[RMDB]
RNA sequence: GGGAACGACUCGAGUAGAGUCGAAAAGAUAUGGAGAUAUGAUUUGUCAGCUCUACGUUCGGAAACGAACGAAGAGCUUGGAUUUAACAAUGUAUCUCCUAAGUCAAAAGAUAGCUUCGGCUAUCAACCACAGAUAUUCGUUCGCGAAUAUCUGUGGAAAAGAAACAACAACAACAAC
Reactivity to DMS in 0.01 (KOAc 150mM, MgCl2 10mM, bicine 150mM(pH8.5), 24C), signal-to-noise 1, nucleotides 027 to 126: g020a010u010a300u010g020g000a010g030a000u000a010u000g020a070u000u000u000g000u000c060a090g020c000u000c000u010a120c000g010u000u010c010g000g000a080a080a100c000g000a010a010c000g010a100a010g010a010g000c000u000u050g030g000a140u010u000u000a140a020c050a010a010u000g000u000a000u000c000u000c000c000u000a020a060g000u000c000a030a120a140a170g010a010u000a000g000c000u000u010c200g020g020c000u020a000u000c000a070a160
Reactivity to 2A3 in 0.01 (KOAc 150mM, MgCl2 10mM, bicine 150mM(pH8.5), 24C), signal-to-noise 1, nucleotides 027 to 126: g000a000u030a020u090g000g010a020g010a000u010a010u060g300a200u190u000u130g100u130c080a030g020c000u000c010u000a000c010g050u060u010c020g000g000a060a040a070c000g000a000a010c000g000a000a000g010a000g000c000u030u120g000g010a000u150u010u300a040a020c000a040a000u060g000u030a000u000c000u000c000c000u000a020a000g000u000c010a070a050a020a160g020a000u000a020g000c020u120u060c300g110g000c010u070a000u050c030a010a000